[RMDB]
RNA sequence: GGGAACGACUCGAGUAGAGUCGAAAAGAUGUUUGGGCCUCUAAUGGCUUUGUGAAUAACAGGAAGAAACCUUUGAAACAUAUUAGUAAAUGGAAAUCGGUUGCUGACCUUAAAAGAUUAAGGCCAGACCAAGGACUACGUUCGCGUAGUCCUUGGUAAAAGAAACAACAACAACAAC
Reactivity to DMS in 0.01 (KOAc 150mM, MgCl2 10mM, bicine 150mM(pH8.5), 24C), signal-to-noise 1, nucleotides 027 to 126: g010a090u000g080u000u000u000g020g000g070c010c020u000c140u000a110a130u000g010g010c010u000u000u000g010u000g030a130a050u020a110a060c200a020g000g000a300a090g010a100a020a060c030c030u000u060u000g010a090a040a230c070a030u000a030u000u000a140g000u000a080a070a050u000g000g040a060a120a130u010c100g030g030u000u000g030c040u010g000a030c000c000u000u000a010a070a110a210g010a060u010u000a030a020g000g020c020c000a100g000